The record gives the reactivity of an RNA of 177 nucleotides to 2A3 and DMS. The RNA was probed in 150 mM KOAc, 10 mM MgCl2 and 150 mM bicine (pH 8.5) at 24 C. It was measured as part of the RMDB library OK2TRN. DMS adducts were read by reverse transcription with MarathonRT. The DMS profile rests on 40,050 reads.
RNA sequence: GGGAACGACUCGAGUAGAGUCGAAAAUUUGCUUCGCCGUGCGCGAUCUGCGGGCGGACGCGUUUCGCCGCGCGCUGCGCUUCGUCGCGCGGCAGUAUCCGUCGCUGUGCGCGGCGAUCCGCGUGAAACUAUACUGAGCAUUCGUGCUCAGUAUAGUAAAAGAAACAACAACAACAAC
Reactivity to 2A3 in 0.01 (KOAc 150mM, MgCl2 10mM, bicine 150mM(pH8.5), 24C), signal-to-noise 9, nucleotides 027 to 126: u070u050u170g030c020u040u040c020g010c010c010g040u070g050c020g010c010g190a270u100c120u230g010c030g060g020g030c010g000g010a010c010g010c010g020u030u040u150c080g000c010c000g000c000g000c020g010c040u070g020c090g050c030u160u160c090g140u070c010g000c000g000c000g000g000c010a000g010u020a050u040c020c020g020u020c010g020c050u060g010u020g030c000g000c000g000g000c000g000a000u010c020c020g020c020g020u070g070a150a040
Reactivity to DMS in 0.01 (KOAc 150mM, MgCl2 10mM, bicine 150mM(pH8.5), 24C), signal-to-noise 9, nucleotides 027 to 126: u010u010u000g010c060u000u000c020g020c010c010g030u000g020c010g020c030g010a090u010c190u010g020c010g020g010g010c010g000g000a020c020g020c020g000u000u000u010c100g010c010c010g010c000g010c010g020c110u000g010c140g010c130u000u000c170g020u010c090g010c020g020c010g000g000c020a030g010u000a070u000c050c050g010u000c030g010c020u010g020u000g010c000g020c000g000g000c000g000a000u000c030c030g020c100g020u000g000a120a100